Structure probing data (DMS and 2A3) for a 177-nucleotide construct. Reactivities are given for positions 27 through 126. For DMS, 5,961 sequencing reads were counted. For 2A3 the reverse transcriptase was SuperScript II with manganese. For DMS the reverse transcriptase was MarathonRT. The reactions ran in a buffer of 150 mM KOAc, 10 mM MgCl2 and 150 mM bicine (pH 8.5), at 24 C.

RNA sequence: GGGAACGACUCGAGUAGAGUCGAAAAGACCGUCAGUUAGACGGAAGAAGUGCAUAAAUCCACAUCGGAAGACAAGAUAGUGCACAAAUGUGGAUAAGCGUACGGAUCUACGUGCGCUAAACGUGAGCAGCAUAUGACGAUUCGUCGUCAUAUGCUGAAAAGAAACAACAACAACAAC
Reactivity to DMS in 0.01 (KOAc 150mM, MgCl2 10mM, bicine 150mM(pH8.5), 24C), signal-to-noise 4, nucleotides 027 to 126: g040a110c000c010g010u000c000a210g020u070u040a080g000a000c000g010g020a130a070g030a090a090g010u000g000c040a040u000a050a060a050u000c000c010a010c130a120u010c090g000g050a150a140g020a090c120a140a140g010a130u000a140g010u000g000c020a070c030a120a090a070u010g000u000g000g000a070u000a060a020g000c000g010u000a000c000g000g020a120u060c210u030a180c000g020u000g000c000g000c010u000a000a070a040c230g010u000g000a060g010
Reactivity to 2A3 in 0.01 (KOAc 150mM, MgCl2 10mM, bicine 150mM(pH8.5), 24C), signal-to-noise 3, nucleotides 027 to 126: g120a010c010c010g030u030c020a060g000u070u300a110g000a010c050g110g070a010a030g070a050a000g010u150g010c030a070u120a180a180a040u040c010c000a020c030a070u030c040g110g060a090a040g020a120c020a070a020g030a180u140a120g150u070g050c050a010c000a030a090a030u060g000u000g000g040a030u030a080a020g010c000g000u010a000c020g010g040a090u050c040u150a090c040g000u000g000c000g000c020u050a010a040a000c110g050u080g050a040g040